[RMDB]
RNA sequence: GGGAACGACUCGAGUAGAGUCGAAAAGUCUGAUCGUGUGGCUGGGUAUCCCCGCCGCUUCAGCCAAUUUCGCGCCUGAACGAGCGAUACUGAGCAGGUGGCUGAUCGCAACGUGCUGGGUAACCCGUGCUAAUUAGGCGUUCGCGCCUAAUUAGCAAAAAGAAACAACAACAACAAC
Reactivity to 2A3 in 0.01 (KOAc 150mM, MgCl2 10mM, bicine 150mM(pH8.5), 24C), signal-to-noise 3, nucleotides 027 to 126: g030u000c000u030g120a130u090c080g040u070g030u080g110g030c040u110g050g010g020u140a150u240c020c000c000c010g020c030c030g010c020u020u010c000a010g000c010c010a060a070u060u100u050c050g010c060g060c080c070u080g030a160a060c040g000a040g070c060g020a030u070a150c090u120g020a040g060c030a050g010g090u020g000g000c000u020g020a070u020c150g020c060a040a080c050g070u130g020c020u030g040g000g050u000a100a070c000c000c000g010
Reactivity to DMS in 0.01 (KOAc 150mM, MgCl2 10mM, bicine 150mM(pH8.5), 24C), signal-to-noise 2, nucleotides 027 to 126: g100u010c030u020g000a000u030c040g000u000g020u000g000g050c060u010g000g000g040u010a150u020c000c000c030c090g000c040c030g000c060u000u000c000a040g000c030c030a020a110u000u040u020c010g000c080g050c060c020u010g070a070a210c090g000a150g000c070g000a130u000a080c000u000g000a010g060c110a000g000g010u000g000g000c000u040g000a000u000c150g060c160a140a170c170g000u030g020c020u060g000g000g000u000a080a090c030c000c090g000

Overview: Chemical mapping of a 177-nucleotide RNA with 2A3 and DMS. 2A3 is a SHAPE reagent: it acylates the 2'-hydroxyl of flexible nucleotides of all four kinds. Conditions: 150 mM KOAc, 10 mM MgCl2 and 150 mM bicine (pH 8.5), 24 C. 2A3 adducts were read by reverse transcription with SuperScript II with manganese.